[RMDB]
Notes
Chemical mapping of a 177-nucleotide RNA with DMS and 2A3. Values cover nucleotides 27 to 126. For DMS the reverse transcriptase was MarathonRT. High 2A3 reactivity points to a flexible backbone, as in loops and unpaired stretches. Conditions: 150 mM KOAc, 10 mM MgCl2 and 150 mM bicine (pH 8.5), 24 C. For 2A3, 1,269 sequencing reads were counted.
RNA sequence: GGGAACGACUCGAGUAGAGUCGAAAACGCUGAGGAGACGCCGCAGUAGAGGGCGCCCCCGGAGUCGCGCCGAACCUGGGCAUGCAGGCGACGCCCCCCAGGGGCCGCUCGCGGCUGGACGGGAGCGAACAGUCAACCUAUUCGUAGGUUGACUGUUAAAAGAAACAACAACAACAAC
Reactivity to DMS in 0.01 (KOAc 150mM, MgCl2 10mM, bicine 150mM(pH8.5), 24C), signal-to-noise 3, nucleotides 027 to 126: c040g020c030u000g000a140g000g010a300g000a150c150g000c010c030g000c020a170g000u010a130g010a120g010g000g000c030g020c040c010c010c000c020g000g000a050g000u000c120g020c050g010c130c020g020a090a110c010c000u000g000g010g000c190a070u010g010c020a030g000g000c020g000a090c100g010c000c050c080c010c020c020a050g000g000g020g000c110c070g010c030u000c020g000c010g020g000c020u000g000g000a120c040g000g010g000a050g020c030g000
Reactivity to 2A3 in 0.01 (KOAc 150mM, MgCl2 10mM, bicine 150mM(pH8.5), 24C), signal-to-noise 1, nucleotides 027 to 126: c020g000c010u040g010a060g060g110a120g070a030c050g050c010c000g020c030a080g040u300a110g060a160g010g030g000c050g010c010c010c000c000c000g000g040a010g000u100c040g000c020g000c000c030g060a110a160c000c010u040g040g130g140c200a000u150g070c000a020g060g000c030g000a010c060g000c000c020c010c050c000c020a020g010g020g010g020c050c050g050c000u010c030g000c000g000g000c010u020g000g010a010c000g020g000g000a000g010c000g000